[RMDB]
RNA sequence: GGGAACGACUCGAGUAGAGUCGAAAAGAUAUGGAUCGUCCGUAGCAACAGCGUACGGUGGUCGGAAACGACCAUUACGACAUGCUAUGGGACGAUCCUAAGUCAAAGACGGAGUUCGCUCCGUCAACCUUCCAUCAGUGUUCGCACUGAUGGAAGGAAAAGAAACAACAACAACAAC
Reactivity to DMS in 0.01 (KOAc 150mM, MgCl2 10mM, bicine 150mM(pH8.5), 24C), signal-to-noise 4, nucleotides 027 to 126: g000a040u000a300u000g030g010a000u000c020g010u000c010c000g010u020a010g000c000a060a100c300a210g030c040g000u000a020c300g010g020u010g000g010u000c010g000g000a080a110a230c010g000a010c000c000a000u000u000a030c010g000a060c160a230u000g010c000u000a020u000g010g020g000a010c000g020a000u010c000c000u000a000a130g010u000c000a020a180a190g000a030c000g020g020a030g010u000u010c300g050c010u000c000c000g020u000c000a050a050
Reactivity to 2A3 in 0.01 (KOAc 150mM, MgCl2 10mM, bicine 150mM(pH8.5), 24C), signal-to-noise 2, nucleotides 027 to 126: g040a000u070a030u150g010g010a000u010c000g020u000c000c010g010u000a000g000c030a020a180c090a190g130c010g060u110a080c190g090g060u010g000g000u020c020g000g000a110a140a020c020g000a000c010c000a000u020u050a010c040g100a070c050a080u190g010c000u000a020u240g190g000g030a010c010g000a010u020c000c000u000a000a000g000u000c030a020a000a180g000a010c010g000g020a010g000u160u090c200g120c180u000c000c010g000u000c010a000a000

Notes: Conditions: 150 mM KOAc, 10 mM MgCl2 and 150 mM bicine (pH 8.5), 24 C. The record gives the reactivity of an RNA of 177 nucleotides to DMS and 2A3. The DMS profile rests on 2,148 reads. The data come from the RNA Mapping Database (RMDB), library TTRDES.